Chemical mapping of a 207-nucleotide RNA with DMS and 2A3.
[RMDB]
RNA sequence: GGGAACGACUCGAGUAGAGUCGAAAAAGCGUAGCGGUACGCCGCUACGCAAGGCGCAUUUUAACUGUAUUGUACGCCUUGCAUAAAGCAAAAGUACUAAAAAAACGUGCCGUUACGACGGCACGAAAAAACAUCCAUUGGUUCGCCAAUGGAUGAAGUUUUUAUGUACGUUCGCGUACAUAAAAACAAAAGAAACAACAACAACAAC
Reactivity to DMS in 0.01 (KOAc 150mM, MgCl2 10mM, bicine 150mM(pH8.5), 24C), signal-to-noise 1, nucleotides 027 to 156: a100g000c040g060u000a000g000c000g050g030u000a060c160g020c040c000g000c000u000a010c000g000c020a000a010g020g010c050g020c010a050u000u000u000u000a070a260c130u000g020u000a300u000u010g000u000a010c010g000c020c000u020u000g040c020a160u000a030a080a160g030c100a100a080a100a130g000u000a180c090u020a010a000a040a070a060a070a100c000g000u000g000c000c040g000u000u000a100c280g010a120c010g000g020c000a000c000g000a000a000a040a100a070a010c000a000u000c000c000a020u000u010g000g000u000u000c300g050c000c000a000a000u010g010g000a020u010g000a000a040
Reactivity to 2A3 in 0.01 (KOAc 150mM, MgCl2 10mM, bicine 150mM(pH8.5), 24C), signal-to-noise 4, nucleotides 027 to 156: a000g020c010g000u010a000g000c020g000g020u020a040c240g050c040c010g000c000u000a000c000g000c000a000a000g000g000c010g000c020a070u040u070u070u210a190a180c110u130g070u200a130u140u110g010u040a020c010g010c000c000u010u020g000c020a040u110a230a140a050g010c020a030a040a000a020g070u070a070c100u210a010a070a030a000a020a020a070c000g000u000g000c010c000g000u020u040a060c270g000a000c000g020g000c000a000c000g010a010a000a000a000a000a000c000a000u000c000c000a000u000u000g000g010u050u070c130g000c090c000a000a000u000g000g000a000u000g000a000a000
The 2A3 profile rests on 3,012 reads. The RNA was probed in 150 mM KOAc, 10 mM MgCl2 and 150 mM bicine (pH 8.5) at 24 C. As a SHAPE reagent, 2A3 marks flexible, mostly unpaired nucleotides at the ribose 2'-OH.